[RMDB]
RNA sequence: GGGAACGACUCGAGUAGAGUCGAAAAGAAAAGAGCCGCAAGCGCAGAUAUGCGCAAUACCGUAACCGCGGCACGGUACACCGGCAAGCCAUCUAAGAGAGCCGGAGAUAGAUGGCAUACAAAAAAACGUUAGUUAUACCUUCGGGUAUAACUAACGAAAAGAAACAACAACAACAAC
Reactivity to 2A3 in 0.01 (KOAc 150mM, MgCl2 10mM, bicine 150mM(pH8.5), 24C), signal-to-noise 2, nucleotides 027 to 126: g090a040a200a020a010g090a030g030c040c050g000c200a160a020g000c030g000c030a000g070a300u160a110u250g000c010g000c020a000a020u030a010c000c000g010u030a110a040c020c060g010c000g040g020c010a000c000g020g000u010a030c050a020c060c000g020g000c040a100a000g000c000c000a010u000c000u080a130a030g110a040g010a030g180c030c030g060g030a040g110a010u070a000g010a000u020g000g000c030a050u110a170c110a040a170a010a000a010a010a020
Reactivity to DMS in 0.01 (KOAc 150mM, MgCl2 10mM, bicine 150mM(pH8.5), 24C), signal-to-noise 2, nucleotides 027 to 126: g010a110a070a110a150g000a220g030c000c000g000c080a110a100g000c010g020c000a020g020a140u010a050u000g020c010g040c000a170a080u000a000c030c010g000u020a060a190c050c030g010c000g030g050c020a010c010g000g010u000a030c240a080c150c040g000g040c030a100a180g000c010c010a010u000c000u000a060a070g020a190g000a140g000c010c030g000g000a030g000a200u000a060g000a010u000g000g000c020a230u000a080c080a000a000a080a090a050a100a100